[RMDB]
RNA sequence: GGGAACGACUCGAGUAGAGUCGAAAACGUGCCAAUCUUUCGUCGGUGGUCAACAACACCAGACCUGCCGUUUCGGCCAGCUCGACGUAGAGGGCAUCGGUCAGGCGGAGGGUGUCGCGGCGCGACCCCGCUUCGCCGUGUUCGCACGGCGAAGCGGAAAAGAAACAACAACAACAAC
Reactivity to 2A3 in 0.01 (KOAc 150mM, MgCl2 10mM, bicine 150mM(pH8.5), 24C), signal-to-noise 4, nucleotides 027 to 126: c000g020u040g010c020c020a060a110u060c050u020u110u080c030g040u020c060g050g010u040g000g050u150c080a080a040c040a080a020c010a090c040c000a010g060a020c010c020u060g070c020c020g140u010u040u120c070g000g010c010c000a050g030c050u060c040g140a130c050g090u170a060g050a110g060g030g000c000a030u100c110g000g020u030c020a010g020g000c000g020g000a020g020g080g020u020g030u040c140g000c110g100g000c030g000c000g100a090c010c010
Reactivity to DMS in 0.01 (KOAc 150mM, MgCl2 10mM, bicine 150mM(pH8.5), 24C), signal-to-noise 3, nucleotides 027 to 126: c040g030u000g000c010c050a130a100u010c010u010u000u010c050g000u000c010g030g030u010g010g010u010c110a090a160c270a110a130c010a040c010c050a140g000a060c040c040u010g000c010c000g010u000u000u000c100g050g020c020c080a050g020c070u020c030g010a080c100g020u010a080g000a070g010g010g010c000a040u000c120g020g000u000c040a250g000g000c000g010g000a050g000g000g000u000g010u000c120g020c150g010g010c080g010c020g000a180c030c020